[RMDB]
Overview:
An RNA of 177 nucleotides, treated with 2A3 and DMS and read out base by base. The reactions ran in a buffer of 150 mM KOAc, 10 mM MgCl2 and 150 mM bicine (pH 8.5), at 24 C. DMS (dimethyl sulfate) methylates the pairing face of unpaired adenines and cytosines. It was measured as part of the RMDB library OK2TST. The DMS profile rests on 956 reads.
RNA sequence: GGGAACGACUCGAGUAGAGUCGAAAACUUGCCGAGCCUGGUGUUCUCGUCCAUCGCGGCCAGCAAUACCAGCUCGCUGGAGAUGAACUGGUCGCCCUUCUGCUGGGCCAGGCGGUCAGCCUGGUUAAGGCGUAGCAGUGUUCGCACUGCUACGCCUAAAAGAAACAACAACAACAAC
Reactivity to 2A3 in 0.01 (KOAc 150mM, MgCl2 10mM, bicine 150mM(pH8.5), 24C), signal-to-noise 1, nucleotides 027 to 126: c030u070u190g060c040c000g020a010g030c040c070u070g050g000u030g040u090u030c040u040c030g100u020c040c000a150u100c100g030c050g000g020c020c000a010g000c050a010a020u040a110c030c000a020g030c020u070c120g020c030u020g030g010a200g040a150u070g030a070a050c050u020g030g000u000c060g000c000c000c020u080u070c040u060g020c000u060g030g000g030c000c000a030g060g040c020g010g040u120c050a040g030c010c020u000g050g000u050u050a040
Reactivity to DMS in 0.01 (KOAc 150mM, MgCl2 10mM, bicine 150mM(pH8.5), 24C), signal-to-noise 1, nucleotides 027 to 126: c050u000u010g050c110c010g020a070g030c050c020u010g000g040u000g010u000u000c030u010c190g000u000c080c010a040u010c190g000c050g000g000c010c000a010g000c060a140a130u020a050c010c000a000g030c010u000c200g030c070u000g000g000a060g020a110u010g010a140a140c000u010g000g040u000c040g010c000c050c020u000u000c140u000g010c030u000g000g000g000c000c020a030g020g000c000g030g050u000c160a180g000c000c000u000g020g000u000u000a060
For 2A3, 1,155 sequencing reads were counted.